RNA sequence: GGGAACGACUCGAGUAGAGUCGAAAAGGAGCUGGUUGAUGCGGUGCAGGAGCGGGCCGCGCGGGGAGCGGAUUGGAUCAAGGUGAUGGCCACGGGCGGAUUCGUUACCACAGCAUCCGAUCCGUGGGGCUUAUUGUGGUUUCGACCACAAUAAGCCAAAAGAAACAACAACAACAAC
Reactivity to DMS in 0.01 (KOAc 150mM, MgCl2 10mM, bicine 150mM(pH8.5), 24C), signal-to-noise 3, nucleotides 027 to 126: g000g000a080g000c010u000g000g010u010u010g010a100u010g060c110g000g000u000g000c070a170g000g000a090g020c060g010g000g000c050c090g030c060g000c050g000g000g020g010a060g000c010g010g010a060u000u020g040g010a050u010c060a130a160g000g000u010g000a090u020g010g030c010c010a040c030g010g000g020c020g010g000a060u010u010c070g010u000u020a070c230c130a060c190a130g000c020a040u000c000c000g030a040u000c010c010g000u000g020g010
Reactivity to 2A3 in 0.01 (KOAc 150mM, MgCl2 10mM, bicine 150mM(pH8.5), 24C), signal-to-noise 5, nucleotides 027 to 126: g060g020a020g010c060u050g070g020u060u060g040a120u110g020c010g010g020u040g030c030a030g020g100a030g020c050g010g030g010c040c000g030c020g000c010g000g020g000g010a060g020c010g010g020a040u020u030g060g010a030u060c060a100a140g000g000u040g030a080u110g040g020c000c020a030c060g040g000g010c050g020g010a040u100u110c020g060u080u050a110c050c010a050c040a060g030c010a000u000c000c000g010a090u010c000c010g000u020g000g020
An RNA of 177 nucleotides, treated with DMS and 2A3 and read out base by base. As a SHAPE reagent, 2A3 marks flexible, mostly unpaired nucleotides at the ribose 2'-OH. It was measured as part of the RMDB library OK1LIB. For DMS the reverse transcriptase was MarathonRT. The reactions ran in a buffer of 150 mM KOAc, 10 mM MgCl2 and 150 mM bicine (pH 8.5), at 24 C.